[RMDB]
RNA sequence: GGGAACGACUCGAGUAGAGUCGAAAAGGUCACUAACUAAAGUAGAUUCGUUUUUACGGCUGUUAGAACAGGACAAAAUGAUAGUUGUAAAAAAAGACACUAAAAAAACACUUGUAACCAUUGUUAAUUAUGACGUCUAUCAAAAUGUCGAUUUAGAAAAUGAAGCAGAUUUCGAUCUGCUUCAUUUAAAAGAAACAACAACAACAAC
Reactivity to 2A3 in 0.01 (KOAc 150mM, MgCl2 10mM, bicine 150mM(pH8.5), 24C), signal-to-noise 1, nucleotides 027 to 156: g040g000u120c040a050c030u030a140a020c010u050a060a050a200g030u040a050g010a130u080u100c030g180u050u090u020u040u060a030c000g010g000c020u010g000u000u000a000g000a060a040c010a060g250g000a060c050a100a080a000a020u010g000a050u040a010g010u110u160g030u140a110a170a060a040a000a030a110g140a030c100a060c120u280a040a120a010a010a090a120a000c020a010c040u120u170g050u120a020a000c050c050a040u000u130g000u030u030a090a090u110u110a040u080g000a080c090g010u000c000u040a030u030c070a030a030a030a020u030g030u000c040g000a020u130u040u020a170g000a010
Reactivity to DMS in 0.01 (KOAc 150mM, MgCl2 10mM, bicine 150mM(pH8.5), 24C), signal-to-noise 1, nucleotides 027 to 156: g040g000u010c000a210c060u010a030a110c010u000a200a140a100g010u000a060g020a050u000u000c240g000u000u020u000u000u000a040c000g040g010c290u000g010u000u020a000g000a090a250c080a300g000g000a090c010a030a040a020a130u040g010a070u000a070g020u010u010g030u000a020a000a000a080a030a060a210g000a090c030a060c040u000a000a000a020a060a100a060a070c020a000c020u010u010g050u010a060a070c030c030a200u000u000g050u000u000a060a070u000u000a040u010g010a000c060g000u000c000u030a150u030c050a090a070a060a050u000g060u000c030g010a180u000u000u000a040g000a090